RNA sequence: GGGAACGACUCGAGUAGAGUCGAAAAGAUAUGGACUGAGGCAACAGCCUACGGACAUCGGAAACGAUGUUUAGGACAUGCCUUGGUCCUAAGUCAAAAGUCCGCUUCACUUCGGUGAAGCGGACAAGAUUUGAACCUUCUUCGGAAGGUUCAAAUCAAAAGAAACAACAACAACAAC
Reactivity to DMS in 0.01 (KOAc 150mM, MgCl2 10mM, bicine 150mM(pH8.5), 24C), signal-to-noise 1, nucleotides 027 to 126: g010a010u000a300u020g000g000a000c000u010g000a000g000g020c010a020a120c300a140g010c000c000u000a040c300g010g030a010c000a000u000c000g000g000a120a070a080c030g010a000u000g000u000u000u000a020g010g000a070c060a200u000g010c000c000u000u000g000g000u000c000c000u000a000a030g000u000c010a060a050a130a160g000u000c030c000g000c000u000u000c020a060c000u000u000c190g020g010u000g000a020a010g010c010g000g010a000c000a030a010

Source information
The record gives the reactivity of an RNA of 177 nucleotides to DMS. DMS adducts were read by reverse transcription with MarathonRT. The data come from the RNA Mapping Database (RMDB), library TTRDEL.